[RMDB]
RNA sequence: GGGAACGACUCGAGUAGAGUCGAAAAUGAUUGAGCGUAGCACACACUCAGACUGUACGACAGUCUGACACACACCUACGCUAGUGCAUCGUGUGUGAGAUAUCGAUGUAGCACGAAAAUGAAGUAACCUUGUUCCCUAUUUCGAUAGGGAACAAGGAAAAGAAACAACAACAACAAC
Reactivity to DMS in 0.01 (KOAc 150mM, MgCl2 10mM, bicine 150mM(pH8.5), 24C), signal-to-noise 4, nucleotides 027 to 126: u020g010a150u010u010g000a040g010c010g020u000a000g000c130a100c100a130c140a110c200u000c010a010g010a010c010u000g030u000a140c300g000a150c010a000g000u000c010u000g000a010c040a040c100a140c100a100c300c020u010a010c020g010c000u000a060g010u000g020c030a060u000c030g000u000g000u000g020u030g020a110g000a070u010a050u000c020g010a030u000g000u000a140g010c020a050c060g000a040a050a050a100u010g000a080a060g010u020a100a160
Reactivity to 2A3 in 0.01 (KOAc 150mM, MgCl2 10mM, bicine 150mM(pH8.5), 24C), signal-to-noise 4, nucleotides 027 to 126: u290g050a080u090u190g060a010g000c020g000u020a000g030c220a010c010a010c000a010c070u000c000a000g000a020c020u030g040u210a100c120g130a040c210a000g010u000c000u000g010a000c010a000c000a000c000a000c060c000u000a020c000g000c010u000a020g050u020g030c010a010u010c020g010u030g000u020g030u030g100a170g050a120u100a020u160c030g010a000u040g030u100a050g070c040a030c080g040a040a030a020a110u170g060a110a010g080u040a030a040
An RNA of 177 nucleotides, treated with DMS and 2A3 and read out base by base.
DMS (dimethyl sulfate) methylates the pairing face of unpaired adenines and cytosines.
Values cover nucleotides 27 to 126.
For 2A3, 4,333 sequencing reads were counted.
The DMS profile rests on 3,478 reads.